[RMDB]
RNA sequence: GGGAACGACUCGAGUAGAGUCGAAAAUGCUUACCAAUGAUGCUGAAAAAUAAAUGUCUGAACAAAUGAUUUCUAUAUGAUAUCAACAUUUUCUCUGAGGUAAGCUAAACAAGUGGUUCGCCACUUGGGUUAUACAACACUUCGGUGUUGUAUAACCAAAAGAAACAACAACAACAAC
Reactivity to DMS in 0.01 (KOAc 150mM, MgCl2 10mM, bicine 150mM(pH8.5), 24C), signal-to-noise 2, nucleotides 027 to 126: u010g030c000u010u000a010c010c000a080a180u010g000a080u020g030c150u000g000a020a070a090a080a100u010a050a060a030u010g000u010c140u010g000a080a130c190a040a160a130u000g000a060u000u030u000c020u000a110u020a070u000g000a020u000a070u000c020a080a100c070a050u000u000u020u000c040u010c050u010g000a300g020g010u000a010a000g010c010u020a070a080a150c020a000a010g030u000g010g000u010u000c170g000c010c000a000c010u000u000g000
Reactivity to 2A3 in 0.01 (KOAc 150mM, MgCl2 10mM, bicine 150mM(pH8.5), 24C), signal-to-noise 3, nucleotides 027 to 126: u070g010c010u000u000a010c000c000a050a120u060g040a020u080g010c110u150g100a080a060a020a040a020u140a020a040a030u040g040u030c090u080g050a060a010c020a050a140a120u090g020a060u090u200u010c050u070a220u040a060u300g030a040u020a010u080c000a010a030c010a030u010u010u010u020c040u000c010u020g010a020g010g000u010a000a000g000c000u000a020a020a000c000a000a000g000u000g010g010u050u070c170g020c030c000a000c000u000u000g030

Conditions: 150 mM KOAc, 10 mM MgCl2 and 150 mM bicine (pH 8.5), 24 C.
Structure probing data (DMS and 2A3) for a 177-nucleotide construct.
2A3 is a SHAPE reagent: it acylates the 2'-hydroxyl of flexible nucleotides of all four kinds.
2A3 adducts were read by reverse transcription with SuperScript II with manganese.
For 2A3, 3,448 sequencing reads were counted.
Source: RMDB library RFMREP, as collected in RNAgym.
For DMS, 1,349 sequencing reads were counted.